[RMDB]
RNA sequence: GGGAACGACUCGAGUAGAGUCGAAAAAUAUCGACGGGAAUGAGUACGCACGAUCAGGUCGCCUGGCGUUCAUAUCCGGUGAAACAGGAAAGGCGGUUGACGGCAACAACAAAGGUUCGGUAAUUUUCAUUAUGCGAGAACUUAAAGAGGGUGAGACCAAAGGGGUCUAAUUCGUUAGACCCCUUUGAAAAGAAACAACAACAACAAC
Reactivity to DMS in 0.01 (KOAc 150mM, MgCl2 10mM, bicine 150mM(pH8.5), 24C), signal-to-noise 3, nucleotides 027 to 156: a090u000a060u000c020g020a090c020g000g000g020a140a040u020g000a070g020u000a030c040g010c110a100c040g010a070u000c040a120g030g010u000c030g010c030c050u010g020g000c030g010u000u010c030a070u010a130u000c060c040g000g020u000g000a080a090a080c040a060g010g010a040a080a100g010g000c010g030g000u000u000g010a100c040g040g000c020a070a080c030a040a070c050a060a080a100g020g020u000u000c030g020g030u010a020a050u000u000u000u000c060a110u000u000a070u000g030c070g000a090g000a040a070c040u010u010a050a050a070g000a070g020g030g030u000g000a100g020a100c190
Reactivity to 2A3 in 0.01 (KOAc 150mM, MgCl2 10mM, bicine 150mM(pH8.5), 24C), signal-to-noise 2, nucleotides 027 to 156: a000u150a030u060c020g030a020c010g010g030g050a030a050u080g010a030g110u080a030c050g010c020a030c090g070a140u030c030a020g050g050u100c020g020c010c010u020g020g000c050g030u010u000c020a050u050a120u120c040c040g050g000u050g060a070a050a030c050a000g050g000a050a050a030g000g010c030g010g030u010u000g000a010c010g000g030c010a090a020c000a010a000c010a030a140a040g050g000u020u010c010g010g000u050a040a030u030u030u070u090c050a050u010u070a010u010g020c000g020a060g020a050a020c020u030u070a120a010a020g010a030g000g000g030u030g000a050g010a010c070
This 207-nucleotide RNA was probed chemically with DMS and 2A3. The data come from the RNA Mapping Database (RMDB), library OK3TST. DMS adducts were read by reverse transcription with MarathonRT. For 2A3 the reverse transcriptase was SuperScript II with manganese.